[RMDB]
RNA sequence: GGGAACGACUCGAGUAGAGUCGAAAAGAAUCACCGUACCUAUUUAGGUUUACGCUCCAAGAUCGGUGGAUGGCAGCCCUAUCAAUAUCUAGGAGAACUGUGCUAUGUUUAGAAGAUUAGGUAGUCUAUUACACAGCCAUGUUCGCAUGGCUGUGAACCUACCGAACCUGUUCGCAGGUUCGGUAGGAAAAGAAACAACAACAACAAC
Reactivity to 2A3 in 0.01 (KOAc 150mM, MgCl2 10mM, bicine 150mM(pH8.5), 24C), signal-to-noise 1, nucleotides 027 to 156: g030a040a070u080c000a000c040c000g000u070a080c000c040u070a140u170u180u200a020g010g010u000u080u140a020c030g010c000u040c000c030a040a000g010a150u030c040g000g010u010g050g000a050u030g120g000c020a010g060c000c000c000u060a100u100c060a040a070u000a010u080c020u020a000g000g000a040g000a090a010c070u040g010u010g120c060u030a030u090g030u130u090u060a190g030a300a120g000a200u060u030a030g060g020u060a020g030u000c000u010a030u040u190a100c000a000c000a000g000c000c000a000u000g090u090u060c070g000c160a000u000g000g010c000u010g000u000g000a030a030
The data come from the RNA Mapping Database (RMDB), library M2RFPK. The record gives the reactivity of an RNA of 207 nucleotides to 2A3. The 2A3 profile rests on 523 reads. For 2A3 the reverse transcriptase was SuperScript II with manganese. Conditions: 150 mM KOAc, 10 mM MgCl2 and 150 mM bicine (pH 8.5), 24 C.